This 177-nucleotide RNA was probed chemically with DMS and 2A3. High 2A3 reactivity points to a flexible backbone, as in loops and unpaired stretches. Values cover nucleotides 27 to 126. Conditions: 150 mM KOAc, 10 mM MgCl2 and 150 mM bicine (pH 8.5), 24 C. High DMS reactivity at an A or C suggests that its Watson-Crick edge is free. For 2A3 the reverse transcriptase was SuperScript II with manganese. The data come from the RNA Mapping Database (RMDB), library OK2TRN.
RNA sequence: GGGAACGACUCGAGUAGAGUCGAAAAUGGGAGGCCGCCCUUAGAAGAUAUUGGCCUAGAGCCUUUGAUGCAAGGGUCGGCAUCAGGGUCACAGCAUGCUGCAGCGGCUGGCGGCAUCAGUGCGGCGCACAAUGUGGGCAUUCGUGCCCACAUUGUGAAAAGAAACAACAACAACAAC
Reactivity to DMS in 0.01 (KOAc 150mM, MgCl2 10mM, bicine 150mM(pH8.5), 24C), signal-to-noise 3, nucleotides 027 to 126: u010g000g010g000a130g010g020c000c020g020c010c000c010u000u010a090g010a080a070g000a190u000a030u000u000g010g020c000c010u010a100g000a220g020c010c000u000u000u010g000a190u010g020c030a030a030g000g010g010u000c050g030g020c000a020u000c040a110g000g000g020u000c040a070c110a080g020c110a030u000g010c040u000g010c050a060g000c040g010g010c040u010g020g010c030g000g000c040a050u000c080a040g010u000g000c060g000g030c080g020
Reactivity to 2A3 in 0.01 (KOAc 150mM, MgCl2 10mM, bicine 150mM(pH8.5), 24C), signal-to-noise 1, nucleotides 027 to 126: u080g020g030g010a060g070g080c010c000g000c000c020c000u050u040a100g030a120a020g020a070u170a010u230u080g050g000c000c000u040a120g020a040g050c010c010u030u040u060g070a050u090g000c020a010a010g040g000g020u290c080g000g010c000a000u030c010a000g020g020g000u050c040a010c000a080g030c010a040u090g000c020u070g000c040a050g030c000g040g000c020u060g010g040c010g000g010c030a020u020c020a010g080u060g050c040g060g020c050g000